[RMDB]
RNA sequence: GGGAACGACUCGAGUAGAGUCGAAAACAUUGGGAUUUAGGGUUUUUCUUGCAAUUGUGAUUUCUCUGGGCACUUUUGUUAAUAUAGCUAGUCAGCGAGUGCUCUAGAUAAUUUUCCUUGCCUCCCCGUGAAUAUACAGUUUCGACUGUAUAUUCACAAAAGAAACAACAACAACAAC
Reactivity to DMS in 0.01 (KOAc 150mM, MgCl2 10mM, bicine 150mM(pH8.5), 24C), signal-to-noise 5, nucleotides 027 to 126: c050a120u020u020g000g010g020a070u010u010u030a070g000g000g000u010u010u000u000u010c010u000u000g010c040a020a060u030u030g020u020g000a060u000u010u010c060u010c040u000g000g000g010c000a010c010u000u010u010u020g010u040u030a080a090u030a110u030a100g020c050u010a090g010u030c110a060g020c040g010a030g000u000g000c010u000c010u030a010g010a040u020a030a030u010u010u010u010c030c090u000u010g000c020c020u000c000c000c010c300
Reactivity to 2A3 in 0.01 (KOAc 150mM, MgCl2 10mM, bicine 150mM(pH8.5), 24C), signal-to-noise 9, nucleotides 027 to 126: c030a070u080u150g070g020g030a080u120u130u200a130g060g020g020u050u050u020u050u040c030u040u100g020c030a070a140u110u110g040u070g070a050u010u090u020c050u000c020u030g010g000g000c010a010c010u020u050u090u070g100u100u100a220a090u210a090u030a180g040c040u030a040g230u270c090a010g030c010g020a010g010u010g010c020u000c010u030a000g000a000u040a030a030u010u050u040u060c010c000u010u020g030c000c010u030c010c010c000c010
Notes:
The record gives the reactivity of an RNA of 177 nucleotides to DMS and 2A3. For DMS, 17,584 sequencing reads were counted. For 2A3 the reverse transcriptase was SuperScript II with manganese. Source: RMDB library OK1LIB, as collected in RNAgym. High 2A3 reactivity points to a flexible backbone, as in loops and unpaired stretches.